[RMDB]
RNA sequence: GGGAACGACUCGAGUAGAGUCGAAAAUUCCGCAACACCACCGGGACGUGAGGUUGAAUUUACAACGCAAUAUCCAGUGCAAAUUAAGGUGGAAGAGCGUCUGUCAUUUAAAGCAUUUGUGGAAGCCGACCUGGGAUACGUUCGCGUAUCCCAGGUCAAAAGAAACAACAACAACAAC
Reactivity to DMS in 0.01 (KOAc 150mM, MgCl2 10mM, bicine 150mM(pH8.5), 24C), signal-to-noise 2, nucleotides 027 to 126: u010u000c000c000g050c050a080a090c190a190c000c020a030c010c100g020g000g010a040c100g000u000g040a170g000g030u040u000g020a070a060u000u000u000a080c090a060a060c060g010c030a160a090u010a130u000c010c010a100g080u010g060c140a130a160a100u000u030a080a090g050g020u000g000g000a050a020g000a300g000c130g030u010c090u000g000u000c160a070u000u000u000a040a080a100g010c050a110u000u000u000g000u000g010g000a080a060g020c030c210
The record gives the reactivity of an RNA of 177 nucleotides to DMS. DMS adducts were read by reverse transcription with MarathonRT. High DMS reactivity at an A or C suggests that its Watson-Crick edge is free. It was measured as part of the RMDB library OK2TST. The reactions ran in a buffer of 150 mM KOAc, 10 mM MgCl2 and 150 mM bicine (pH 8.5), at 24 C. The DMS profile rests on 672 reads.